[RMDB]
RNA sequence: GGGAACGACUCGAGUAGAGUCGAAAAUGUGGGAAGAACGGCAUGGAGUGGAAGGGAAAGGACACUCUGGUCGGGGCAUCAGGGCGACAACAGGUUGCGUCUGUGCUGGCCAUGUACGGUCCCCGGAGACAAACCCGAUUUUCGAAUCGGGUUUGUCAAAAGAAACAACAACAACAAC
Reactivity to DMS in 0.01 (KOAc 150mM, MgCl2 10mM, bicine 150mM(pH8.5), 24C), signal-to-noise 1, nucleotides 027 to 126: u000g020u020g010g000g020a080a080g000a120a120c130g010g020c040a060u010g020g000a110g030u000g000g020a150a130g000g000g000a070a030a110g000g020a100c030a010c070u000c050u000g020g010u000c030g010g000g000g030c050a020u000c030a020g010g000g000c010g030a070c050a090a100c200a070g000g000u010u000g000c040g000u010c090u000g020u000g000c020u010g010g000c020c020a090u000g030u010a070c110g000g000u020c030c020c000c050g010g000a180
Reactivity to 2A3 in 0.01 (KOAc 150mM, MgCl2 10mM, bicine 150mM(pH8.5), 24C), signal-to-noise 2, nucleotides 027 to 126: u120g020u100g000g030g020a080a060g000a170a030c010g000g030c090a130u110g050g000a060g040u030g020g080a080a080g090g020g000a090a100a040g070g000a010c010a000c020u000c020u020g000g020u040c030g030g000g050g040c010a020u120c070a050g030g010g050c000g000a030c010a220a030c030a100g010g300u050u030g020c040g160u080c040u030g020u010g040c000u030g040g000c010c010a030u070g040u040a060c070g000g060u010c010c000c020c000g030g040a050